[RMDB]
RNA sequence: GGGAACGACUCGAGUAGAGUCGAAAAGUUAUGCUUUCGCUGCCUAAUGGCGGUGCGGGAAACCCACUCUAAAGUCCUUAGGGUUAGCCCCUUAAGGCGGGGUUCGGAGGCACCUGGCAACAGAAGCUGAAACUGUGCACAUUCGUGUGCACAGUAAUCUUUAACUCUGCUUCGGCAGAGUUAAAGAAAAAGAAACAACAACAACAAC
Reactivity to 2A3 in 0.01 (KOAc 150mM, MgCl2 10mM, bicine 150mM(pH8.5), 24C), signal-to-noise 1, nucleotides 027 to 156: g000u000u100a110u240g040c070u020u050u000c010g020c050u010g000c000c010u220a240a200u240g210g000c060g030g030u000g000c000g160g050g000a020a050a020c010c020c050a050c050u300c080u170a290a240a120g300u190c000c020u000u000a000g000g000g050u050u010a000g050c070c000c000c000u030u030a040a000g010g010c000g000g000g000g010u000u130c050g000g130a060g110g020c010a000c000c020u010g140g000c010a030a000c020a070g000a000a000g000c010u000g000a070a000a000c000u000g010u010g020c000a000c000a030u000u080c150g100u070g000u000g030c000a000c000a000g000u000a000a000

About this RNA:
An RNA of 207 nucleotides, treated with 2A3 and read out base by base. Conditions: 150 mM KOAc, 10 mM MgCl2 and 150 mM bicine (pH 8.5), 24 C.